[RMDB]
RNA sequence: GGGAACGACUCGAGUAGAGUCGAAAAUAAAAGGAGGAGGAGAAAUAUAGCGCGAGAUCGGUCCUCCCACGCGCGUCUCGCGCUGAUAAGCGGAAUAAGAGGAUGAUUAAUAGAUAGCGCCCAAAAAGGACAUACUAUCUUUCGAGAUAGUAUGUCCAAAAGAAACAACAACAACAAC
Reactivity to 2A3 in 0.01 (KOAc 150mM, MgCl2 10mM, bicine 150mM(pH8.5), 24C), signal-to-noise 1, nucleotides 027 to 126: u070a020a080a010a000g060g010a010g010g000a000g020g020a040g100a050a180a010u210a010u100a080g010c000g000c040g000a030g000a010u110c070g000g060u030c020c080u040c040c010c010a100c010g170c000g000c020g000u000c010u000c020g000c000g000c000u010g000a000u010a030a030g020c030g020g060a060a000u090a190a020g020a030g070g030a080u080g000a020u040u250a160a040u050a040g100a060u070a010g020c020g000c000c000c000a020a090a050a000a010
Reactivity to DMS in 0.01 (KOAc 150mM, MgCl2 10mM, bicine 150mM(pH8.5), 24C), signal-to-noise 2, nucleotides 027 to 126: u020a020a020a110a130g010g020a070g010g010a060g000g020a080g010a080a120a050u000a010u000a030g010c010g000c000g000a040g000a040u000c050g050g000u000c070c040u000c020c020c040a090c120g000c190g020c180g010u000c010u000c000g000c010g030c000u000g010a040u000a060a070g020c050g040g000a080a070u020a080a080g000a060g020g000a040u010g000a060u000u000a040a090u000a080g000a070u010a060g010c070g000c010c030c030a030a040a080a060a110
Background
Structure probing data (2A3 and DMS) for a 177-nucleotide construct. 2A3 adducts were read by reverse transcription with SuperScript II with manganese. The reactions ran in a buffer of 150 mM KOAc, 10 mM MgCl2 and 150 mM bicine (pH 8.5), at 24 C. Values cover nucleotides 27 to 126. It was measured as part of the RMDB library M2PK90.